[RMDB]
RNA sequence: GGGAACGACUCGAGUAGAGUCGAAAAAUUCACUGAUGCAAAACAUUCACCCGUAAUAGACUGAGAAUUGAGCCUUAACUUCAGAUUAACUUGUGAGAAUCAGGAAAAUUCCUUCAACUGCAUUGCAUCCUCUUGGACCAGGGCUAGAAUGGGGAUACCUAGCACUGGUGUUCGCACCAGUGCUAGGAAAAGAAACAACAACAACAAC
Reactivity to 2A3 in 0.01 (KOAc 150mM, MgCl2 10mM, bicine 150mM(pH8.5), 24C), signal-to-noise 2, nucleotides 027 to 156: a020u080u050c020a010c080u060g020a010u050g030c050a040a000a130a100c050a080u080u120c020a050c000c030c020g000u020a040a090u060a100g070a060c030u020g060a030g060a090a100u120u080g020a020g050c000c000u020u110a110a090c020u060u080c050a010g020a150u100u020a110a070c060u130u070g010u050g010a050g030a050a050u050c040a000g020g000a000a000a050a120u030u000c020c000u030u070c010a060a060c040u030g010c030a070u040u130g020c000a000u040c000c000u060c050u010u040g020g000a000c060c020a060g010g080g000c050u060a040g080a020a060u080g000g000g000g000a000u030a040
Reactivity to DMS in 0.01 (KOAc 150mM, MgCl2 10mM, bicine 150mM(pH8.5), 24C), signal-to-noise 1, nucleotides 027 to 156: a010u000u010c070a030c000u020g030a090u000g020c000a030a060a120a110c010a110u000u000c020a100c010c050c010g040u000a100a210u010a050g010a070c000u020g010a110g010a150a170u000u000g000a040g080c010c040u000u000a010a110c040u000u010c010a100g000a110u000u010a090a070c080u000u000g020u000g000a230g000a090a070u010c060a040g020g000a010a050a080a060u000u000c010c040u000u000c030a070a140c020u010g000c030a140u030u000g010c030a100u000c000c030u000c070u010u000g010g010a120c040c040a030g000g000g020c020u000a060g000a070a100u000g000g000g010g000a100u000a150